[RMDB]
RNA sequence: GGGAACGACUCGAGUAGAGUCGAAAAGAUAUGGAGCCUUAGCUCGAUGUGCGUAGAGCGAGGAUCUAUCAGGUCGGAAACGACCUAUAGGGAGCUCUGAUCACAUCGAGCUAAGGCUCCUAAGUCAUCCUAGACUUUACUUCGGUAAAGUCUAGGAAAAAGAAACAACAACAACAAC
Reactivity to DMS in 0.01 (KOAc 150mM, MgCl2 10mM, bicine 150mM(pH8.5), 24C), signal-to-noise 1, nucleotides 027 to 126: g020a040u000a300u010g020g000a020g030c000c010u000u000a000g020c000u000c000g000a020u000g010u010g000c300g030u000a040g010a020g030c000g010a110g010g020a030u010c000u000a000u000c270a000g000g000u000c000g020g010a060a120a260c000g000a000c000c000u000a000u000a000g000g000g000a030g000c000u010c000u000g000a080u020c010a000c010a000u000c000g000a010g030c000u020a000a040g020g010c000u000c000c000u000a000a040g000u000c030a300